The record gives the reactivity of an RNA of 207 nucleotides to 2A3. Values cover nucleotides 27 to 156.
RNA sequence: GGGAACGACUCGAGUAGAGUCGAAAAACGCCGCUGGGUACAUGUGGCUUUGCUUUUGACGCUCAGCGUCUGAAGCGCGCACGGACGGAGCGAUAAGCAAAGCGUAACAUCAUGUACCUGUGCUGAAGCGCGCACGGCAACCGAAAGGUGCGAAGAACUAAUCUUGGGGGUUCGCCCCCAAGAUUAGAAAAGAAACAACAACAACAAC
Reactivity to 2A3 in 0.01 (KOAc 150mM, MgCl2 10mM, bicine 150mM(pH8.5), 24C), signal-to-noise 1, nucleotides 027 to 156: a010c110g080c030c010g000c000u020g000g000g000u010a010c010a010u000g010u010g030g000c000u000u000u000g020c000u110u080u050u300g200a210c050g020c000u010c000a250g220c060g010u020c010u020g060a190a060g000c000g020c000g000c000a050c010g000g000a000c000g010g000a000g010c010g150a200u020a120a000g000c000a010a010a010g010c020g050u050a060a090c090a110u250c000a000u000g000u010a000c000c000u020g000u000g010c020u170g060a060a040g000c000g000c000g000c010a000c010g080g000c020a100a130c030c020g030a130a040a020g050g000u050g040c050g060a100a040g040a120a040